The record gives the reactivity of an RNA of 177 nucleotides to DMS and 2A3. The RNA was probed in 150 mM KOAc, 10 mM MgCl2 and 150 mM bicine (pH 8.5) at 24 C. The 2A3 profile rests on 7,734 reads. High 2A3 reactivity points to a flexible backbone, as in loops and unpaired stretches. DMS adducts were read by reverse transcription with MarathonRT.
[RMDB]
RNA sequence: GGGAACGACUCGAGUAGAGUCGAAAAAAAAGAUAUGGAUCUACUACCCACCGUUAGAGUAUGCUUGGAUUUAGAAUCGGAAACGAUUCUUGUCAGCAUACCUAACGAGGUAGAUCCUAAGUCAAAACUACUUAGUAGUCUUCGGACUACUAAGUAGAAAAGAAACAACAACAACAAC
Reactivity to DMS in 0.01 (KOAc 150mM, MgCl2 10mM, bicine 150mM(pH8.5), 24C), signal-to-noise 4, nucleotides 027 to 126: a040a060a100a120g010a100u030a210u000g010g010a000u000c000u010a010c010u010a150c020c000c010a300c100c000g000u000u000a010g020a130g020u000a000u000g010c010u010u010g040g000a010u010u000u000a010g020a000a010u010c000g000g000a090a040a190c000g010a010u010u000c000u000u000g010u000c010a020g020c000a020u010a000c000c000u010a000a000c000g000a040g020g000u000a000g000a010u000c000c010u000a060a100g010u010c090a050a060a140a150
Reactivity to 2A3 in 0.01 (KOAc 150mM, MgCl2 10mM, bicine 150mM(pH8.5), 24C), signal-to-noise 5, nucleotides 027 to 126: a030a010a050a050g210a100u280a100u140g000g000a000u010c000u020a020c010u150a230c010c020c040a010c030c020g000u000u010a030g020a070g120u000a010u010g010c050u180u240g260g010a090u300u300u120a010g000a000a010u000c020g000g060a070a050a050c030g000a010u000u010c000u000u010g000u020c000a000g000c000a000u000a010c010c000u000a000a000c000g000a010g010g010u000a000g000a010u000c010c000u010a100a010g190u090c070a010a020a150a210